[RMDB]
RNA sequence: GGGAACGACUCGAGUAGAGUCGAAAAGAUUAUGACUGAACGCCUCUAAGUCAGAAUCCAAGCUAGCAACCGGCGCCUGUGCCCGCCGCUCGCCCCGACCCACAUUAGGGCGUUCGCGCCCCAAGGGAAUGGCGAAAAUGUUCGCAUUUUCGCCAUUAAAAGAAACAACAACAACAAC
Reactivity to DMS in 0.01 (KOAc 150mM, MgCl2 10mM, bicine 150mM(pH8.5), 24C), signal-to-noise 2, nucleotides 027 to 126: g000a050u020u000a030u010g060a040c010u010g020a130a090c090g030c020c010u000c030u010a220a040g000u000c020a050g010a090a040u000c060c080a040a150g000c030u000a100g000c020a110a070c150c040g020g000c050g000c060c030u000g020u020g000c010c020c010g000c100c090g000c020u000c070g000c010c010c000c010g020a140c020c000c010a090c150a090u020u020a050g000g000g030c000g050u000u060c150g020c000g000c000c000c000c080a030a060g000g020g000
Reactivity to 2A3 in 0.01 (KOAc 150mM, MgCl2 10mM, bicine 150mM(pH8.5), 24C), signal-to-noise 3, nucleotides 027 to 126: g050a030u160u130a030u150g030a020c030u010g000a150a030c050g020c030c010u020c010u010a030a020g000u000c010a000g040a000a000u050c050c020a080a030g030c050u090a010g000c000a040a100c040c020g010g010c000g050c020c010u120g000u070g070c000c000c000g020c000c010g000c010u010c050g040c010c000c000c010g030a020c020c010c000a060c010a070u150u300a020g010g010g000c000g010u060u050c040g000c010g010c000c000c000c000a020a050g040g010g030